[RMDB]
This 177-nucleotide RNA was probed chemically with DMS and 2A3.
RNA sequence: GGGAACGACUCGAGUAGAGUCGAAAACUGCGGCGGCCCGAUCGACACGCUCGUCGCCGCAUGCGAUACGAUCGCAUCCGAAGCGAUGGUGCUCGAAUUCCGCCUCGCGCGCGCGAGCGCACGCGGAAUACGACCCAUGAUUCGUCAUGGGUCGUAUAAAAGAAACAACAACAACAAC
Reactivity to DMS in 0.01 (KOAc 150mM, MgCl2 10mM, bicine 150mM(pH8.5), 24C), signal-to-noise 6, nucleotides 027 to 126: c070u000g030c020g000g000c010g020g000c050c110c040g020a060u010c090g020a120c180a090c110g000c090u000c070g010u010c010g010c010c000g000c060a010u000g010c040g010a060u000a070c160g000a080u000c000g010c020a040u010c090c070g020a160a100g000c050g020a060u000g000g020u010g000c140u000c020g010a150a120u010u000c030c010g000c020c110u010c110g020c030g000c010g000c080g020c250g000a160g020c000g020c000a030c160g020c030g000g000a090
Reactivity to 2A3 in 0.01 (KOAc 150mM, MgCl2 10mM, bicine 150mM(pH8.5), 24C), signal-to-noise 3, nucleotides 027 to 126: c030u030g000c020g020g000c000g000g030c030c010c020g020a110u080c060g090a070c050a020c200g040c030u090c030g030u010c010g000c000c010g000c010a000u040g000c030g030a020u020a160c140g120a200u020c000g000c010a050u000c000c040g100a110a000g040c030g070a080u050g050g050u060g010c080u010c030g020a040a080u100u000c000c010g000c000c010u080c090g000c000g000c000g000c010g030c040g080a060g040c020g010c000a010c010g000c010g010g000a010

Background: DMS adducts were read by reverse transcription with MarathonRT. For DMS, 6,626 sequencing reads were counted. The 2A3 profile rests on 5,539 reads.